[RMDB]
Structure probing data (DMS and 2A3) for a 177-nucleotide construct. DMS adducts were read by reverse transcription with MarathonRT. It was measured as part of the RMDB library TTRDES. For DMS, 7,701 sequencing reads were counted. High DMS reactivity at an A or C suggests that its Watson-Crick edge is free. The RNA was probed in 150 mM KOAc, 10 mM MgCl2 and 150 mM bicine (pH 8.5) at 24 C.
RNA sequence: GGGAACGACUCGAGUAGAGUCGAAAAGAUAUGGACACUUUGAGGGAGCACUAGGUCGGAAACGACCUGGGUGCAUCGAUCUCAUGGUGUCCUAAGUCAAAUCAGUAGGACUUCGGUCCUACUGAAACACUUAUUAGGCGUUCGCGCCUAAUAAGUGAAAAGAAACAACAACAACAAC
Reactivity to DMS in 0.01 (KOAc 150mM, MgCl2 10mM, bicine 150mM(pH8.5), 24C), signal-to-noise 4, nucleotides 027 to 126: g010a010u000a110u020g000g000a010c000a010c000u000u010u010g010a030g010g000g020a190g030c000a020c000u000a020g010g010u000c000g010g000a010a020a060c010g010a010c000c000u000g000g020g000u000g040c000a140u000c300g000a120u010c010u010c000a000u000g000g010u000g010u000c000c000u000a010a020g000u000c010a100a160a190u000c000a000g010u000a010g010g000a020c000u000u020c240g030g000u000c000c000u000a000c000u000g010a000a110a200
Reactivity to 2A3 in 0.01 (KOAc 150mM, MgCl2 10mM, bicine 150mM(pH8.5), 24C), signal-to-noise 3, nucleotides 027 to 126: g010a000u010a010u060g000g000a000c000a000c000u000u050u000g020a020g050g140g110a240g020c010a010c010u020a000g010g000u010c000g020g010a010a010a010c000g010a000c020c010u020g030g000g040u040g000c010a030u100c080g230a270u000c000u000c010a020u010g000g000u000g000u000c000c000u000a000a000g000u010c020a010a070a270u030c010a000g010u000a000g000g000a000c000u070u120c300g090g000u000c000c000u010a000c000u000g010a000a000a000